[RMDB]
Chemical mapping of a 170-nucleotide RNA with 2A3 and DMS. The RNA was probed in 150 mM KOAc, 10 mM MgCl2 and 150 mM bicine (pH 8.5) at 24 C. Source: RMDB library 15KLIB, as collected in RNAgym.
RNA sequence: GGGAACGACUCGAGUAGAGUCGAAAAGUUAUUGCUGAUUCUAAGUCCUUCACACUUAUCUUUGGUGGCGUAGCUUACGCCUACUUUGGAUGUGAGGAAGGUACUAUGUACUUUGUGCCUAGAGCUAAAACCCUUGGGUUCGCCCAAGGGAAAAGAAACAACAACAACAAC
Reactivity to 2A3 in 0.01 (KOAc 150mM, MgCl2 10mM, bicine 150mM(pH8.5), 24C), signal-to-noise 9, nucleotides 027 to 129: g040u050u090a140u190u190g060c080u090g070a260u190u050c060u100a050a010g030u010c000c000u010u010c010a000c000a000c020u170u180a040u050c000u000u020u020g000g020u000g010g000c010g010u010a070g170c120u200u110a000c000g000c000c010u090a020c010u010u010u040g010g000a020u010g020u000g010a230g050g000a010a000g010g000u010a010c000u030a000u080g050u010a040c030u060u080u100g100u060g020c000c010u070a090g020a030g080c040u060a030a060a040a090
Reactivity to DMS in 0.01 (KOAc 150mM, MgCl2 10mM, bicine 150mM(pH8.5), 24C), signal-to-noise 2, nucleotides 027 to 129: g040u060u060a120u000u000g050c060u060g000a150u040u030c080u070a010a020g000u030c000c000u000u000c030a060c010a080c000u040u100a060u030c030u010u010u050g000g050u020g020g040c010g060u010a110g070c300u030u030a020c000g020c000c000u000a000c030u030u000u030g020g010a030u040g020u040g020a140g000g000a000a000g020g020u060a040c030u020a080u000g030u000a060c040u000u000u000g030u040g000c000c040u000a040g010a150g040c140u030a010a040a080a090